RNA sequence: GGGAACGACUCGAGUAGAGUCGAAAAUGUCCUUCCCGUCCGCCUUUGUGAGCACUGCAAUUACAACAGCGCGUCACAGCAGUACUAUUUCAGAGGAGAUGAGGAGAACACAUGGGAAGACUUACGACCUUCUUAAAGCCUUCGGGCUUUAAGAAGGAAAAGAAACAACAACAACAAC
Reactivity to 2A3 in 0.01 (KOAc 150mM, MgCl2 10mM, bicine 150mM(pH8.5), 24C), signal-to-noise 2, nucleotides 027 to 126: u060g030u050c010c000u020u010c000c010c000g070u050c010c050g030c020c000u030u010u040g040u000g010a010g010c010a000c020u000g000c030a070a190u220u090a160c060a150a020c030a130g080c050g020c020g210u100c030a020c020a050g030c000a010g000u000a010c040u030a070u100u160u080c020a020g000a010g060g030a050g020a120u120g040a060g040g030a080g010a110a030c010a010c020a120u170g060g010g000a000a030g010a060c010u040u050a030c080g120a040
Reactivity to DMS in 0.01 (KOAc 150mM, MgCl2 10mM, bicine 150mM(pH8.5), 24C), signal-to-noise 3, nucleotides 027 to 126: u000g000u000c070c020u000u000c000c010c010g020u000c030c060g030c020c040u000u000u020g020u010g000a040g000c020a010c030u000g000c020a120a200u000u000a080c210a110a090c100a080g010c090g010c060g020u020c150a080c140a150g010c030a030g000u000a070c050u010a020u010u000u000c040a040g000a080g000g010a280g000a070u000g010a060g010g000a070g000a080a030c020a040c160a080u010g010g000g010a060a060g020a090c060u010u000a070c200g000a210

About this RNA:
Structure probing data (2A3 and DMS) for a 177-nucleotide construct. The RNA was probed in 150 mM KOAc, 10 mM MgCl2 and 150 mM bicine (pH 8.5) at 24 C. High 2A3 reactivity points to a flexible backbone, as in loops and unpaired stretches.